[RMDB]
The record gives the reactivity of an RNA of 177 nucleotides to 2A3 and DMS. DMS adducts were read by reverse transcription with MarathonRT. The reactions ran in a buffer of 150 mM KOAc, 10 mM MgCl2 and 150 mM bicine (pH 8.5), at 24 C. For 2A3 the reverse transcriptase was SuperScript II with manganese. The DMS profile rests on 1,235 reads.
RNA sequence: GGGAACGACUCGAGUAGAGUCGAAAAUGGAGGAGAUAUGGAAUCAUUGACGUUACUCGCAGAGCUAAGACAGUCGGAAACGAUCGAGCUCUGACCCGAGGAGGAAGGGAUUCCUAAGUCGAGAGAAGGAUAAGACAGACUUCGGUCUGUCUUAUCCAAAAGAAACAACAACAACAAC
Reactivity to 2A3 in 0.01 (KOAc 150mM, MgCl2 10mM, bicine 150mM(pH8.5), 24C), signal-to-noise 1, nucleotides 027 to 126: u180g130g010a070g060g080a060g000a010u060a030u210g020g030a030a010u030c040a240u020u140g040a060c010g100u150u190a070c010u000c030g000c000a000g000a010g000c020u060a210a000g120a180c060a130g050u020c000g010g000a080a050a070c000g000a010u130c000g040a000g000c000u000c020u010g100a040c040c030c030g000a010g020g040a020g060g050a020a000g150g040g020a010u010u030c010c020u040a250a060g020u040c030g040a020g020a010g040a280a090
Reactivity to DMS in 0.01 (KOAc 150mM, MgCl2 10mM, bicine 150mM(pH8.5), 24C), signal-to-noise 2, nucleotides 027 to 126: u010g000g030a080g000g000a140g020a030u010a300u010g000g000a040a010u000c010a100u030u000g020a300c060g010u010u010a120c020u000c020g030c030a000g000a020g000c000u020a160a110g000a060c300a100g010u000c000g000g010a110a150a180c020g030a000u000c070g000a020g000c040u000c010u010g010a090c140c180c020g010a050g030g000a120g010g030a040a190g010g010g000a040u000u000c010c000u020a050a060g010u000c010g000a180g010a120g010a110a100